[RMDB]
RNA sequence: GGGAACGACUCGAGUAGAGUCGAAAAAAUCCAUUCUCUGAGCGAGAAGGAUGGCCGAAGCGGGUUCGCAUUUGAGGCAUUAAGGUAGACGACAGAGUUCUUCUGGAAACUACUGCCUCGCGCUGACACAUAGUGUACCAUUCGUGGUACACUAUGUAAAAGAAACAACAACAACAAC
Reactivity to DMS in 0.01 (KOAc 150mM, MgCl2 10mM, bicine 150mM(pH8.5), 24C), signal-to-noise 9, nucleotides 027 to 126: a080a020u000c010c010a130u000u000c010u000c000u010g020a160g040c210g000a020g010a040a030g000g010a010u000g010g020c030c010g010a100a070g010c070g010g010g000u010u010c110g010c040a140u010u020u020g000a030g010g010c010a210u020u020a100a100g010g010u000a000g020a090c150g010a300c010a010g000a030g030u040u030c140u030u000c000u010g000g000a130a140a140c010u000a000c010u000g010c000c000u000c010g010c130g010c030u010g010a180c170
Reactivity to 2A3 in 0.01 (KOAc 150mM, MgCl2 10mM, bicine 150mM(pH8.5), 24C), signal-to-noise 9, nucleotides 027 to 126: a000a000u040c030c030a240u050u010c020u000c020u060g210a100g130c100g020a010g020a040a010g020g000a020u030g040g010c010c020g050a070a010g030c060g020g060g040u120u150c050g000c100a090u080u080u280g010a000g000g020c010a010u150u240a090a040g030g000u010a010g020a120c090g020a010c030a010g020a020g050u220u120c040u080u000c000u020g010g000a060a070a040c000u010a000c010u070g000c000c000u000c010g000c020g000c010u070g030a010c010